[RMDB]
RNA sequence: GGGAACGACUCGAGUAGAGUCGAAAAGUCGGUUGCCCGUUGCCAGUUGUCGGCUGCAAGUUGGGCCAAAAGCGCCUUUAAUUACUGGCAGCAGGCUCCUUCGGCCGCUCCUGCAGCUCAUGCAGCACACGGCAUCAUACUUCGGUAUGAUGCCGUGAAAAGAAACAACAACAACAAC
Reactivity to 2A3 in 0.01 (KOAc 150mM, MgCl2 10mM, bicine 150mM(pH8.5), 24C), signal-to-noise 2, nucleotides 027 to 126: g040u010c020g010g050u110u100g020c000c040c000g010u000u010g010c010c030a040g000u000u030g070u150c040g050g020c010u030g060c070a090a070g080u130u130g060g040g000c000c000a020a120a000a130g030c060g000c010c000u100u150u190a220a260u220u150a030c020u020g000g010c010a000g010c000a020g000g000c010u030c000c000u040u090c020g000g000c000c000g030c040u010c000c050u040g000c000a060g020c020u040c090a060u140g000c030a000g040c010a020